This 177-nucleotide RNA was probed chemically with DMS and 2A3. The 2A3 profile rests on 1,644 reads. For DMS, 2,070 sequencing reads were counted. The RNA was probed in 150 mM KOAc, 10 mM MgCl2 and 150 mM bicine (pH 8.5) at 24 C. Source: RMDB library OK2TRN, as collected in RNAgym.

RNA sequence: GGGAACGACUCGAGUAGAGUCGAAAACUCUGGGUCAUUUUCGGCGAGGACCGCUUUCGCUGGAGAUCGGCCUGUCGCUUGCGGUAUUCGGAAUCUUGCACGCCCUCGCUCAAGCCUUCGUCACUCCGGAGGAGGAACAGUUCGCUGUUCCUCCUCCAAAAGAAACAACAACAACAAC
Reactivity to DMS in 0.01 (KOAc 150mM, MgCl2 10mM, bicine 150mM(pH8.5), 24C), signal-to-noise 2, nucleotides 027 to 126: c040u000c020u020g030g000g050u000c020a050u000u000u000u000c010g020g010c020g010a070g000g020a210c210c250g000c090u010u000u000c020g000c030u000g030g010a010g000a010u000c130g000g020c000c020u000g010u000c080g020c060u000u000g010c060g030g000u010a060u000u000c080g000g010a120a080u010c040u000u000g010c060a100c090g010c030c010c020u010c070g000c010u000c050a080a070g010c050c030u000u000c040g000u000c070a080c050u010c110c170
Reactivity to 2A3 in 0.01 (KOAc 150mM, MgCl2 10mM, bicine 150mM(pH8.5), 24C), signal-to-noise 1, nucleotides 027 to 126: c030u050c030u020g010g060g000u010c030a050u010u010u010u070c000g010g000c010g000a020g010g060a200c110c030g070c160u120u210u030c020g000c000u020g040g000a000g000a050u060c120g000g010c000c000u000g050u010c100g030c040u070u130g000c030g000g040u070a120u090u090c010g120g050a060a060u000c050u000u110g030c060a040c100g060c000c000c010u010c020g000c000u030c050a040a050g010c000c030u030u030c010g030u030c020a060c110u010c010c020